[RMDB]
RNA sequence: GGGAACGACUCGAGUAGAGUCGAAAAGCGUAACAUUGCGCGCGAUUUAGUAACAAGAGGACACACACUUUGGACAGUCACAGUCGAUACCGAACGGAGUUUUCACUGUAACUAUCGCCCGUCUCACUACGGCUAAACAAUUCGUUGUUUAGCCGUAAAAAGAAACAACAACAACAAC
Reactivity to 2A3 in 0.01 (KOAc 150mM, MgCl2 10mM, bicine 150mM(pH8.5), 24C), signal-to-noise 8, nucleotides 027 to 126: g010c010g020u070a070a080c070a190u090u200g000c020g000c000g000c000g020a000u020u060u180a090g040u050a060a060c040a070a030g030a040g080g060a010c000a000c000a000c000a000c060u030u090u060g020g020a020c030a040g020u040c010a030c010a060g080u090c090g020a010u030a060c020c000g020a060a040c080g090g030a110g020u060u000u000u050c050a070c030u020g010u060a040a010c000u020a020u080c020g010c020c010c010g050u020c030u010c030a060c050
Reactivity to DMS in 0.01 (KOAc 150mM, MgCl2 10mM, bicine 150mM(pH8.5), 24C), signal-to-noise 6, nucleotides 027 to 126: g010c030g020u000a070a120c180a100u000u010g010c040g010c020g010c050g000a080u000u020u020a080g010u010a050a060c100a070a070g020a080g010g010a050c050a060c070a060c030a050c120u000u000u010g000g000a070c050a080g000u010c040a050c090a030g000u010c100g000a040u000a040c040c020g010a060a090c130g000g010a080g030u010u010u010u000c060a050c080u000g020u010a050a060c060u000a060u010c060g010c000c000c020g000u000c040u000c060a110c220